[RMDB]
RNA sequence: GGGAACGACUCGAGUAGAGUCGAAAAAAACUAACACACAACUCGCAGCAGCUUAAUAGCUACUACGGAUCCUAGCAGCCGUCGCCUGGUCGGCUGAUUUCUAGGGUCUCACUUUAAACAGGCUACGCUUGGACCCUUCCGUCUGGAGGGAAAGAGACCUAGUACUGCAGUUCGCUGCAGUACUAGGAAAAGAAACAACAACAACAAC
Reactivity to 2A3 in 0.01 (KOAc 150mM, MgCl2 10mM, bicine 150mM(pH8.5), 24C), signal-to-noise 1, nucleotides 027 to 156: a020a000a010c180u300a180a000c030a000c010a040c000a180a000c070u060c150g030c020a010g010c000a010g040c050u160u190a070a020u120a190g000c010u080a080c010u040a010c040g010g040a040u000c000c000u010a010g020c000a000g010c010c000g010u020c060g010c020c010u060g020g010u040c000g000g030c060u000g020a010u000u240u080c000u010a010g000g000g000u050c000u010c000a040c010u040u220u120a000a000a040c010a000g000g000c030u050a000c010g010c040u050u020g060g000a060c000c000c000u040u090c050c050g160u130c230u280g010g000a000g000g010g000a000a000a000g000a000g000a000